An RNA of 207 nucleotides, treated with 2A3 and DMS and read out base by base. High 2A3 reactivity points to a flexible backbone, as in loops and unpaired stretches. 2A3 adducts were read by reverse transcription with SuperScript II with manganese. Source: RMDB library RNAMAK, as collected in RNAgym.
RNA sequence: GGGAACGACUCGAGUAGAGUCGAAAACGUUACUUCGGUAACGAUAACUCCUAAGUCAUACAACAGCUCCCAUGUUCGCUUUGAUCAUAUCGGAAACGAUAUGGGAGCGAAUUUGGGAGACAUGUAUGAUAUGGACUGGCUAGGGUUUCGACCCUAAUCACCGUAAAGGGUUCGCCCUUUACGGUGAAAAAGAAACAACAACAACAAC
Reactivity to 2A3 in 0.01 (KOAc 150mM, MgCl2 10mM, bicine 150mM(pH8.5), 24C), signal-to-noise 2, nucleotides 027 to 156: c010g010u000u000a000c000u050u060c300g150g000u010a000a010c000g010a050u150a120a130c050u040c010c010u030a110a070g010u010c000a010u010a010c000a050a020c030a130g030c000u010c010c010c000a000u010g010u000u000c010g010c050u210u130u110g100a090u190c000a000u000a010u000c000g070g000a140a080a070c010g000a000u000a000u000g010g020g010a010g010c000g000a000a000u010u000u000g000g000g000a000g000a000c000a010u010g000u000a020u000g000a000u000a050u050g030g030a060c100u110g100g080c100u110a020g000g040g000u050u090u120c180g080a100c020c000c000u040a050a070
Reactivity to DMS in 0.01 (KOAc 150mM, MgCl2 10mM, bicine 150mM(pH8.5), 24C), signal-to-noise 2, nucleotides 027 to 156: c010g040u010u000a030c010u000u040c300g070g060u000a020a040c010g010a160u000a090a100c080u000c010c000u000a080a300g010u010c000a050u010a010c000a040a040c080a230g000c000u010c010c000c000a030u000g030u000u010c000g000c000u000u010u000g030a080u000c000a000u000a030u000c020g010g010a200a080a160c010g010a000u000a000u000g000g000g000a010g030c000g000a000a000u010u000u000g020g040g000a070g030a020c080a070u020g020u000a020u000g010a040u000a300u000g010g000a080c120u010g000g020c090u010a020g010g050g040u000u010u010c110g020a130c030c000c020u000a030a140